The record gives the reactivity of an RNA of 177 nucleotides to DMS and 2A3. The 2A3 profile rests on 5,199 reads. The data come from the RNA Mapping Database (RMDB), library OK1LIB. Values cover nucleotides 27 to 126.

[RMDB]
RNA sequence: GGGAACGACUCGAGUAGAGUCGAAAAGAGUAAAUAGAGGAGUCAGGGUUCGCACCGGCUCCGCGAACCUAGGGUAACACUGACUAUGGAGCGGAAGAGAGAGCAGACGAAGAUACGUCUGCAUAGACAGGCACUAUUAGUUCGCUAAUAGUGCCUGAAAAGAAACAACAACAACAAC
Reactivity to DMS in 0.01 (KOAc 150mM, MgCl2 10mM, bicine 150mM(pH8.5), 24C), signal-to-noise 5, nucleotides 027 to 126: g000a090g020u020a040a070a060u020a090g000a060g020g010a060g000u000c040a110g010g020g000u010u000c050g000c010a100c050c030g000g020c010u000c010c020g020c020g000a020a020c000c000u000a150g000g010g000u020a060a080c160a160c100u010g010a070c090u020a070u010g010g010a030g000c020g000g010a220a050g000a070g020a120g000a110g020c000a020g000a020c000g010a090a140g000a150u030a100c010g010u010c000u000g020c000a010u030a010g010a250
Reactivity to 2A3 in 0.01 (KOAc 150mM, MgCl2 10mM, bicine 150mM(pH8.5), 24C), signal-to-noise 5, nucleotides 027 to 126: g070a010g110u160a040a140a110u240a070g110a050g100g010a030g020u060c060a070g000g010g020u040u040c030g000c030a040c050c020g130g030c010u000c010c000g000c000g000a010a000c030c000u030a020g120g030g070u080a090a000c030a000c110u030g050a010c020u040a040u230g040g000a010g010c070g010g000a130a030g070a010g000a020g020a000g020c000a000g000a000c020g020a100a050g100a200u150a140c020g000u000c000u000g000c000a000u010a000g040a020